[RMDB]
RNA sequence: GGGAACGACUCGAGUAGAGUCGAAAAAUGUAUGUUAUGACCCUGAAAGGGAAGGAGUAUACGAUGAAUCGAAUAUACAUGAGCUUAGAACUAUAAAGUUGAACGACUUAGAUAUAAAUAGAUAUCCCGCUUAGCAGUGAUUCGUCACUGCUAAGCGAAAAGAAACAACAACAACAAC
Reactivity to DMS in 0.01 (KOAc 150mM, MgCl2 10mM, bicine 150mM(pH8.5), 24C), signal-to-noise 2, nucleotides 027 to 126: a020u090g010u000a010u000g040u000u000a060u000g000a300c080c000c030u020g000a050a300a040g000g020g020a050a210g010g000a070g000u000a000u000a050c050g030a080u010g000a110a070u000c050g000a040a180u000a030u000a010c300a070u010g000a020g010c090u000u010a100g000a030a030c000u000a080u050a080a080a060g030u000u020g000a000a020c300g000a070c040u000u000a070g000a060u000a010u000a050a170a030u020a070g000a070u020a020u000c020c060
Reactivity to 2A3 in 0.01 (KOAc 150mM, MgCl2 10mM, bicine 150mM(pH8.5), 24C), signal-to-noise 2, nucleotides 027 to 126: a000u100g010u010a000u040g000u040u050a050u070g180a120c000c000c000u010g290a140a070a180g050g000g000a060a050g090g000a070g020u050a030u000a060c090g060a120u070g040a180a000u050c000g030a040a000u000a000u000a010c060a110u060g030a000g000c040u030u050a060g130a080a000c050u030a040u160a300a190a000g030u050u000g050a060a000c050g130a070c070u040u070a000g030a060u000a030u030a130a160a130u110a000g080a000u050a040u070c030c030
Source: RMDB library OK1LIB, as collected in RNAgym.
This 177-nucleotide RNA was probed chemically with DMS and 2A3.
The 2A3 profile rests on 1,292 reads.
For DMS the reverse transcriptase was MarathonRT.